[RMDB]
RNA sequence: GGGAACGACUCGAGUAGAGUCGAAAAGAUAUGGACUUCGUGCGGCACUGAUGACCAGUUUCGGAAACGAAACUGCAAGGUGUACACGAGAGUCCUAAGUCAAAAGCUUGUUGUUCGCAACAAGCAACCCGUGAUAGAACUUCGGUUCUAUCACGGGAAAAGAAACAACAACAACAAC
Reactivity to DMS in 0.01 (KOAc 150mM, MgCl2 10mM, bicine 150mM(pH8.5), 24C), signal-to-noise 1, nucleotides 027 to 126: g000a080u000a300u000g000g050a030c000u030u000c000g000u030g000c090g020g050c000a000c000u010g010a030u000g020a130c300c000a000g000u000u000u000c000g060g000a070a040a300c000g010a070a000a010c000u010g020c040a070a060g010g060u040g000u000a120c020a030c000g000a070g000a060g000u000c030c000u010a040a160g000u020c000a010a050a120a140g000c000u000u020g050u000u000g000u000u010c180g000c000a000a000c000a000a000g030c040a110a050
Reactivity to 2A3 in 0.01 (KOAc 150mM, MgCl2 10mM, bicine 150mM(pH8.5), 24C), signal-to-noise 1, nucleotides 027 to 126: g030a000u080a050u190g000g000a000c000u000u000c020g000u020g090c240g240g000c060a000c000u230g080a300u160g000a200c010c010a000g000u040u000u010c080g080g000a060a060a040c000g000a010a020a000c000u000g000c020a000a260g020g000u010g040u070a020c020a000c040g090a100g110a010g010u000c000c000u010a110a040g060u040c020a080a000a000a160g000c000u010u010g020u030u000g080u010u190c300g010c200a000a010c000a020a000g020c000a000a000